[RMDB]
RNA sequence: GGGAACGACUCGAGUAGAGUCGAAAAGAUAUGGAGUUGUCCAAGGCGUUGAUCUCGGAAACGAGGGAGCCUCGGACUGACUCCUAAGUCAAAGGAUAUGACAGUCGUUCGCGACUGUCAUAUCCAAGUAUCAACUAACGUUCGCGUUAGUUGAUACAAAAGAAACAACAACAACAAC
Reactivity to 2A3 in 0.01 (KOAc 150mM, MgCl2 10mM, bicine 150mM(pH8.5), 24C), signal-to-noise 3, nucleotides 027 to 126: g020a020u080a060u170g000g000a010g000u020u010g000u010c010c010a020a020g010g000c010g280u300u030g000a000u000c000u000c010g010g030a090a080a070c010g000a000g000g000g010a010g000c000c000u010c010g000g000a000c000u010g000a000c000u000c000c010u010a140a030g040u010c050a150a020a120g000g000a010u010a000u000g000a010c000a000g000u000c000g040u060u140c300g020c020g170a000c000u030g000u000c000a000u000a000u000c000c000a000a000
Reactivity to DMS in 0.01 (KOAc 150mM, MgCl2 10mM, bicine 150mM(pH8.5), 24C), signal-to-noise 3, nucleotides 027 to 126: g000a050u000a300u000g000g010a010g000u000u000g010u000c000c010a030a010g010g010c000g020u010u010g010a010u000c010u000c000g000g010a100a100a210c010g000a020g000g000g010a020g000c000c000u000c060g000g000a010c000u000g010a010c000u000c000c000u000a020a080g000u000c050a070a110a150g010g000a010u000a000u000g000a010c010a000g000u000c000g020u000u010c230g030c010g000a010c000u000g000u000c000a010u000a000u000c000c010a010a030
An RNA of 177 nucleotides, treated with 2A3 and DMS and read out base by base. It was measured as part of the RMDB library TTRDEL. 2A3 adducts were read by reverse transcription with SuperScript II with manganese. For DMS, 4,541 sequencing reads were counted. The 2A3 profile rests on 8,133 reads. DMS adducts were read by reverse transcription with MarathonRT. The reactions ran in a buffer of 150 mM KOAc, 10 mM MgCl2 and 150 mM bicine (pH 8.5), at 24 C.